[RMDB]
Source information:
Chemical mapping of a 177-nucleotide RNA with DMS and 2A3. Source: RMDB library RFM100, as collected in RNAgym. For 2A3, 925 sequencing reads were counted. The reactions ran in a buffer of 150 mM KOAc, 10 mM MgCl2 and 150 mM bicine (pH 8.5), at 24 C. Values cover nucleotides 27 to 126. For 2A3 the reverse transcriptase was SuperScript II with manganese. For DMS the reverse transcriptase was MarathonRT.
RNA sequence: GGGAACGACUCGAGUAGAGUCGAAAAAUAAUCUUAGACAUUACUUAAAUGUAAGGCCGAAGAAGCAAAAAAAAGAAUUUAUCUUAAUCUUUUUUGAAACUGACAGGCAAAAGGAAGAUUAUUUGACGUUUUGUAUUCACUUCGGUGAAUACAAAACAAAAGAAACAACAACAACAAC
Reactivity to DMS in 0.01 (KOAc 150mM, MgCl2 10mM, bicine 150mM(pH8.5), 24C), signal-to-noise 1, nucleotides 027 to 126: a000u000a000a000u010c000u000u000a040g000a010c010a140u000u000a040c020u000u000a030a110a160u000g000u000a020a000g010g070c010c000g000a040a090g000a300a010g000c040a000a000a020a000a000a050a000a030g000a110a040u020u060u040a100u030c060u080u020a000a000u000c000u000u000u000u000u000u000g000a130a140a170c000u040g020a120c300a300g000g000c000a030a100a030a030g010g000a150a150g000a000u050u000a000u000u040u010g000a230c150
Reactivity to 2A3 in 0.01 (KOAc 150mM, MgCl2 10mM, bicine 150mM(pH8.5), 24C), signal-to-noise 2, nucleotides 027 to 126: a000u020a000a000u000c000u000u030a060g020a100c050a160u020u010a040c020u040u120a080a170a120u130g010u000a020a010g030g000c010c020g030a070a000g030a000a000g060c060a060a050a000a000a000a080a000a000g050a070a010u130u130u120a190u180c020u070u110a080a060u020c010u010u040u020u000u000u000g040a120a070a030c010u020g050a060c040a000g020g000c000a040a060a000a010g050g020a000a000g020a000u000u010a020u000u000u050g100a030c070